[RMDB]
RNA sequence: GGGAACGACUCGAGUAGAGUCGAAAAUGGCUCAGCGUAAUCGUUGCCGCCUUCGGCCAAUUGUCCGCGUUUGCUGCACCAUUGCUUGCGCCCUCGGUAAGCGAAAGUACAGGCGGCACCUCACCGGAACUCGCGCUUUGUGCGUCGCUCUUGCUCACGUACCUAAGGGAUUCGUCCCUUAGGUACGAAAAGAAACAACAACAACAAC
Reactivity to 2A3 in 0.01 (KOAc 150mM, MgCl2 10mM, bicine 150mM(pH8.5), 24C), signal-to-noise 4, nucleotides 027 to 156: u110g030g000c010u010c030a000g000c010g070u070a030a100u110c050g050u070u060g030c010c000g000c000c000u060u070c050g030g000c030c010a100a150u110u130g040u060c040c020g000c010g030u040u060u060g010c010u020g020c010a040c070c030a130u040u150g030c030u050u060g020c030g040c000c010c050u050c060g030g010u030a040a020g010c030g030a090a060a010g030u060a050c040a030g010g000c000g000g000c010a010c000c010u080c040a070c020c010g070g000a090a040c030u040c070g030c010g030c060u060u070u150g050u060g020c030g020u040c020g010c020u020c020u050u140g020c020u030c020a060
Reactivity to DMS in 0.01 (KOAc 150mM, MgCl2 10mM, bicine 150mM(pH8.5), 24C), signal-to-noise 1, nucleotides 027 to 156: u010g020g040c020u000c030a150g020c020g000u030a070a060u000c030g010u010u010g000c010c020g000c030c030u000u000c050g040g000c000c010a050a070u010u000g050u000c000c010g010c100g030u000u010u000g020c030u010g020c050a100c060c000a180u010u000g030c010u010u010g020c040g020c000c020c020u030c000g010g020u010a050a070g030c010g020a050a040a040g020u010a140c160a020g000g010c010g030g000c040a000c040c050u000c110a080c040c010g000g020a090a050c050u000c050g030c010g000c030u010u000u000g030u000g020c030g030u000c020g010c040u000c050u000u010g000c040u000c070a280